The record gives the reactivity of an RNA of 177 nucleotides to 2A3 and DMS. For DMS, 7,756 sequencing reads were counted.

[RMDB]
RNA sequence: GGGAACGACUCGAGUAGAGUCGAAAAGAUAUGGAAUGCAUGGUGGAGCCUUGGGUCGGAAACGACCCUGGGCGUUGAAACCAGCAUUCCUAAGUCAAACAGUUUACAGCUUCGGCUGUAAACUGAACCCUAUUAGCAUGUUCGCAUGCUAAUAGGGAAAAGAAACAACAACAACAAC
Reactivity to 2A3 in 0.01 (KOAc 150mM, MgCl2 10mM, bicine 150mM(pH8.5), 24C), signal-to-noise 4, nucleotides 027 to 126: g010a000u010a000u060g000g010a020a000u010g020c260a300u110g010g030u030g080g300a100g000c010c000u000u010g010g000g000u000c000g000g000a030a000a010c000g010a010c020c010c010u000g010g010g010c010g000u020u110g040a010a010a000c000c000a000g000c000a000u000u000c000c000u000a000a000g010u000c010a050a110a160c000a020g000u000u000u000a000c010a000g030c010u080u200c300g250g000c010u010g000u020a010a000a000c000u000g000a010a010
Reactivity to DMS in 0.01 (KOAc 150mM, MgCl2 10mM, bicine 150mM(pH8.5), 24C), signal-to-noise 5, nucleotides 027 to 126: g010a020u000a090u000g010g000a010a020u000g000c000a110u000g020g020u010g010g010a150g020c000c000u000u000g000g000g010u010c000g010g000a020a010a030c010g010a000c000c010c010u000g000g010g020c010g030u000u010g000a140a300a040c010c010a020g010c000a010u000u000c000c000u000a000a070g000u000c000a160a150a300c010a010g010u000u000u000a000c000a000g010c000u000u020c300g040g010c000u010g010u010a000a010a000c000u000g000a070a100
Values are in units of 0.01, from 0 to 300, in steps of 10. Values cover nucleotides 27 to 126.